[RMDB]
RNA sequence: GGGAACGACUCGAGUAGAGUCGAAAAUGGGCAGGGCGUUCGGGAUUCCAGGGCUACCCUAGGGUCAUGGGAGGGAAGGGCCGGGUCUCAAACCUAUUGGGCGGGCCGGGCCGGGCAGGGCUCCAAAAUGAUCAUAGAGAUUCGUCUCUAUGAUCAUAAAAGAAACAACAACAACAAC
Reactivity to 2A3 in 0.01 (KOAc 150mM, MgCl2 10mM, bicine 150mM(pH8.5), 24C), signal-to-noise 1, nucleotides 027 to 126: u060g000g020g040c070a070g080g010g010c060g120u220u140c010g020g000g150a150u110u160c060c000a050g040g000g020c050u020a190c000c010c010u050a100g050g000g000u010c030a080u130g030g060g200a130g010g020g030a160a030g040g090g100c300c080g000g040g060u020c010u010c140a140a100a020c010c000u040a150u150u190g000g030g140c090g030g030g000c150c100g040g050g060c100c050g000g020g000c110a030g020g050g000c030u070c050c040a040a040a000
Reactivity to DMS in 0.01 (KOAc 150mM, MgCl2 10mM, bicine 150mM(pH8.5), 24C), signal-to-noise 1, nucleotides 027 to 126: u000g020g000g010c060a070g010g010g000c170g030u020u010c100g030g020g020a180u010u000c100c020a060g010g000g030c080u000a060c020c010c050u010a060g000g010g000u000c100a120u010g000g000g000a080g000g020g000a180a080g000g020g010c100c040g000g020g000u000c080u000c060a030a030a080c110c080u010a040u010u020g000g000g020c110g000g010g010c170c130g000g000g010c090c090g000g020g010c240a080g000g000g000c120u000c040c080a020a050a070

Source information:
Chemical mapping of a 177-nucleotide RNA with 2A3 and DMS. The DMS profile rests on 916 reads. The reactions ran in a buffer of 150 mM KOAc, 10 mM MgCl2 and 150 mM bicine (pH 8.5), at 24 C. Source: RMDB library OK2TRN, as collected in RNAgym. High DMS reactivity at an A or C suggests that its Watson-Crick edge is free.